An RNA of 177 nucleotides, treated with 2A3 and DMS and read out base by base.
[RMDB]
RNA sequence: GGGAACGACUCGAGUAGAGUCGAAAAGAUAUGGAGGCAGAACUACAGCAAGCGAUAUGAUUACUUGGAUUUAAUAUCGGAAACGAUAUUUGUCAGUAAUCAUAUCUAGCUGCUGCCUCCUAAGUCAUCUCCCAUUUUAGUUCGCUAAAAUGGGAGAAAAAGAAACAACAACAACAAC
Reactivity to 2A3 in 0.01 (KOAc 150mM, MgCl2 10mM, bicine 150mM(pH8.5), 24C), signal-to-noise 2, nucleotides 027 to 126: g030a040u090a050u210g010g050a000g000g040c020a030g000a190a110c230u300a080c300a030g000c040a130a100g280c070g160a000u000a000u000g000a000u000u020a020c020u120u290g160g010a100u300u300u280a050a010u020a000u000c020g000g020a080a060a040c000g010a010u000a010u020u010u010g010u000c000a020g000u000a000a000u000c000a000u010a000u020c000u010a010g000c010u020g010c000u010g000c000c000u000c000c000u000a020a010g010u020c000a020
Reactivity to DMS in 0.01 (KOAc 150mM, MgCl2 10mM, bicine 150mM(pH8.5), 24C), signal-to-noise 2, nucleotides 027 to 126: g010a030u000a300u010g000g000a030g000g020c000a020g000a110a080c080u000a300c000a010g020c030a170a240g020c290g010a010u000a000u020g000a000u000u000a010c030u010u010g000g000a010u000u000u000a030a020u000a010u000c000g030g010a160a100a250c000g020a000u000a020u000u010u010g000u000c000a000g000u000a010a000u000c000a000u000a000u000c000u000a270g000c000u000g000c020u000g000c000c000u000c000c010u000a030a080g040u000c030a170
Record summary: 2A3 is a SHAPE reagent: it acylates the 2'-hydroxyl of flexible nucleotides of all four kinds.